[RMDB]
RNA sequence: GGGAACGACUCGAGUAGAGUCGAAAAGAAUGUAAGGGCGUAAUCGCGCCUUGACGUGAGUGAGACAAGACAGAAUGCUAUCCAAAGUAAGAUAGCAUAGCUCACAAUACGCUGAUCUGUCAUAGAAACGUACUACUCCUUUCGAGGAGUAGUACGUAAAAGAAACAACAACAACAAC
Reactivity to DMS in 0.01 (KOAc 150mM, MgCl2 10mM, bicine 150mM(pH8.5), 24C), signal-to-noise 4, nucleotides 027 to 126: g000a140a010u020g020u000a060a000g000g000g000c000g010u000a100a170u060c200g000c000g060c000c020u000u000g020a090c020g000u030g010a180g000u020g000a040g000a130c100a110a080g010a060c000a010g000a080a060u010g000c000u000a000u000c000c120a080a190a170g000u030a110a150g000a020u010a000g000c000a010u000a010g000c010u000c030a000c020a040a110u030a050c050g000c130u020g000a170u010c000u000g000u000c020a160u030a090g010a090a100
Reactivity to 2A3 in 0.01 (KOAc 150mM, MgCl2 10mM, bicine 150mM(pH8.5), 24C), signal-to-noise 4, nucleotides 027 to 126: g080a020a070u210g010u250a030a050g010g040g010c000g010u060a140a200u070c160g000c000g040c010c010u000u000g000a010c040g060u060g010a030g000u010g000a020g010a080c080a200a000g010a000c010a000g050a040a000u000g000c000u010a000u000c040c070a120a050a030g150u120a210a050g070a000u000a000g000c000a000u000a010g000c000u000c000a000c000a000a030u160a050c060g080c190u080g010a100u000c000u000g010u000c020a010u030a120g150a000a180
Chemical mapping of a 177-nucleotide RNA with DMS and 2A3.
Conditions: 150 mM KOAc, 10 mM MgCl2 and 150 mM bicine (pH 8.5), 24 C.
2A3 adducts were read by reverse transcription with SuperScript II with manganese.
The DMS profile rests on 5,006 reads.